Chemical mapping of a 207-nucleotide RNA with 2A3 and DMS.
The reactions ran in a buffer of 150 mM KOAc, 10 mM MgCl2 and 150 mM bicine (pH 8.5), at 24 C.
For 2A3 the reverse transcriptase was SuperScript II with manganese.
Reactivities are given for positions 27 through 156.

[RMDB]
RNA sequence: GGGAACGACUCGAGUAGAGUCGAAAAAGGGCAGGGUGAAAUUCCCGAUCGGCGGUAAAGUCCGCGAGCCGAACGAAAAAGGUUUGGCAGGAACCGGUGAGAUUCCGGUACCGACAGUAUUGUCUGGAUGACCACUUCAGCUUCGGCUGAAGUGGAACGAAUGUGUAGAGUUCGCUCUACACAUUCGAAAAGAAACAACAACAACAAC
Reactivity to 2A3 in 0.01 (KOAc 150mM, MgCl2 10mM, bicine 150mM(pH8.5), 24C), signal-to-noise 2, nucleotides 027 to 156: a000g130g010g020c070a040g050g000g000u010g020a000a040a010u070u020c000c020c010g010a080u050c010g000g020c000g000g000u000a010a010a000g010u010c000c000g000c000g020a010g000c000c000g000a000a000c000g050a130a100a110a000a020g080g000u010u000u000g000g010c000a010g020g010a000a000c010c000g000g000u010g000a000g000a000u000u000c000c000g000g000u010a000c000c010g000a000c000a000g080u060a080u050u100g040u000c090u060g100g000a100u120g090a080c010c000a000c000u000u000c000a000g000c010u060u160c230g110g000c010u010g000a000a000g010u000g000g000a000a000
Reactivity to DMS in 0.01 (KOAc 150mM, MgCl2 10mM, bicine 150mM(pH8.5), 24C), signal-to-noise 2, nucleotides 027 to 156: a060g000g010g040c060a080g020g070g040u040g010a070a100a270u010u000c010c060c000g000a090u000c010g010g000c000g000g000u000a150a100a090g020u000c000c010g000c000g000a280g000c000c000g050a030a150c010g020a060a200a120a130a130g050g010u000u000u000g020g000c010a070g000g010a050a020c020c000g000g000u000g000a300g000a300u000u000c000c030g020g010u000a000c000c010g000a020c040a100g030u000a100u010u020g000u010c010u050g000g020a120u000g000a200c020c000a000c000u010u000c000a000g030c000u010u000c270g040g020c000u000g000a000a010g020u020g000g000a010a040